An RNA of 177 nucleotides, treated with DMS and 2A3 and read out base by base.
RNA sequence: GGGAACGACUCGAGUAGAGUCGAAAAUAUAUGGUAUUGGCGAACUUAGCGAUGUGACGAUGUGAAUGAGUGCGGGAUGUACAGAAUAAGGUCAGUCGGAUAAUCACAGAAAUCAAUAUGAGAAGGAGCCGUACUAAUAGUUCGCUAUUAGUACGGCAAAAGAAACAACAACAACAAC
Reactivity to DMS in 0.01 (KOAc 150mM, MgCl2 10mM, bicine 150mM(pH8.5), 24C), signal-to-noise 3, nucleotides 027 to 126: u000a090u010a030u000g010g020u000a060u000u000g020g000c030g020a050a060c080u010u000a070g040c050g040a080u020g010u000g000a050c080g010a080u000g010u010g010a050a100u020g000a100g000u010g030c040g000g020g020a080u010g010u010a080c070a070g030a080a080u010a100a100g010g000u010c040a080g010u010c070g020g000a110u000a040a120u010c030a050c100a050g000a080a050a060u010c050a050a050u010a040u010g000a130g000a130a040g000g010a230
Reactivity to 2A3 in 0.01 (KOAc 150mM, MgCl2 10mM, bicine 150mM(pH8.5), 24C), signal-to-noise 2, nucleotides 027 to 126: u120a000u000a040u090g030g010u070a050u050u100g030g000c030g000a030a040c030u060u070a050g000c020g030a040u040g040u040g110a030c050g020a010u060g060u030g190a110a070u070g030a020g060u090g040c050g000g040g010a030u120g020u020a020c000a040g140a130a060u160a150a020g050g040u010c010a010g020u020c010g030g030a080u090a110a010u120c040a010c010a060g080a020a070a000u000c030a000a080u080a090u280g070a080g020a040a060g030g010a030
About this RNA
The RNA was probed in 150 mM KOAc, 10 mM MgCl2 and 150 mM bicine (pH 8.5) at 24 C. The DMS profile rests on 1,854 reads.